[RMDB]
RNA sequence: GGGAACGACUCGAGUAGAGUCGAAAAGUGGCAAAAGGAUUGGAUUGAAAGAGUAGAGGGUCUAAGAUUUCUAGGAAGGGUGAGAUUAGGGAGAAGUUACCAACUGGGGUGUGGGUUACAGGGACCCGAUUACUAGCCAGUUCGCUGGCUAGUAAUCAAAAGAAACAACAACAACAAC
Reactivity to 2A3 in 0.01 (KOAc 150mM, MgCl2 10mM, bicine 150mM(pH8.5), 24C), signal-to-noise 1, nucleotides 027 to 126: g030u000g000g020c040a020a050a060a080g080g030a080u070u080g000g060a050u010u170g070a160a190a050g030a020g040u030a030g020a060g030g050g000u000c010u040a070a050g010a150u070u090u000c020u110a020g000g070a100a020g030g040g000u050g020a080g020a090u000u140a080g010g000g010a010g010a050a020g060u120u030a080c040c040a080a040c060u100g020g010g000g010u090g070u050g000g000g000u020u030a070c050a020g000g030g080a010c000c030c010
Reactivity to DMS in 0.01 (KOAc 150mM, MgCl2 10mM, bicine 150mM(pH8.5), 24C), signal-to-noise 2, nucleotides 027 to 126: g010u020g020g010c230a060a090a090a060g000g010a080u000u000g010g010a140u010u000g020a070a110a070g000a090g020u010a070g020a090g000g010g030u000c070u020a070a110g000a100u000u000u010c110u000a070g010g000a140a070g000g010g000u000g010a080g000a130u000u030a070g000g010g020a110g000a050a060g000u030u000a080c090c070a030a110c080u010g000g010g000g000u010g010u010g000g000g010u000u010a070c120a070g010g000g010a040c040c050c000